[RMDB]
RNA sequence: GGGAACGACUCGAGUAGAGUCGAAAAACCAAGUCUGGGGGCCGAUGAGGGUUGGCUCAAAGUAGGGUUUUGACUUGAGAACUCAAGCUGUGACCCCAAAACGAUGGAGGUAAAUGAGAAUCCUCCUAAAACUAUGGACACUUCGGUGUCCAUAGAACGUAGCAACCUUGUUCGCAAGGUUGCUACGAAAAGAAACAACAACAACAAC
Reactivity to 2A3 in 0.01 (KOAc 150mM, MgCl2 10mM, bicine 150mM(pH8.5), 24C), signal-to-noise 1, nucleotides 027 to 156: a000c020c000a020a000g170u060c030u060g070g000g000g000g010c000c020g000a020u050g090a130g000g180g000u020u010g040g000c000u020c010a040a010a000g130u110a050g040g020g020u010u010u060u150g040a060c000u000u080g000a020g010a080a070c050u000c010a000a020g040c040u100g030u180g120a160c000c000c000c040a000a080a020a000c100g040a050u070g000g000a010g000g010u100a210a280a130u190g030a030g070a100a070u120c010c010u000c020c020u050a010a010a010a010c000u000a000u000g010g010a000c000a000c020u030u020c270g060g000u000g000u000c000c000a000u010a010g000a000a000
Structure probing data (2A3) for a 207-nucleotide construct. For 2A3 the reverse transcriptase was SuperScript II with manganese. The 2A3 profile rests on 726 reads. It was measured as part of the RMDB library M2RFPK.